[RMDB]
RNA sequence: GGGAACGACUCGAGUAGAGUCGAAAACGGGGCCACGGGUGCCGCGCGCUGGCGAAUCUCCCCGGCGAGGCCCCCGACCAGCGAGGGCGCCACCACGUCGCGGCCCUUCGCGCAAUCGAGCACCGCCAAGACGGUAACGUUUCGACGUUACCGUCUUAAAAGAAACAACAACAACAAC
Reactivity to DMS in 0.01 (KOAc 150mM, MgCl2 10mM, bicine 150mM(pH8.5), 24C), signal-to-noise 1, nucleotides 027 to 126: c170g000g010g000g020c010c030a170c170g010g010g040u010g040c080c000g030c090g000c070g020c060u030g020g030c140g010a150a090u000c250u010c060c020c010c000g010g000c040g000a130g010g010c030c000c000c010c040g000a050c040c040a230g030c000g000a020g010g000g000c130g000c010c000a070c010c000a030c250g030u010c080g040c020g010g020c020c000c000u000u000c030g000c030g000c200a080a060u000c030g010a060g010c000a030c020c030g030c090c110
Structure probing data (DMS) for a 177-nucleotide construct. It was measured as part of the RMDB library OK2TRN. Conditions: 150 mM KOAc, 10 mM MgCl2 and 150 mM bicine (pH 8.5), 24 C. DMS adducts were read by reverse transcription with MarathonRT.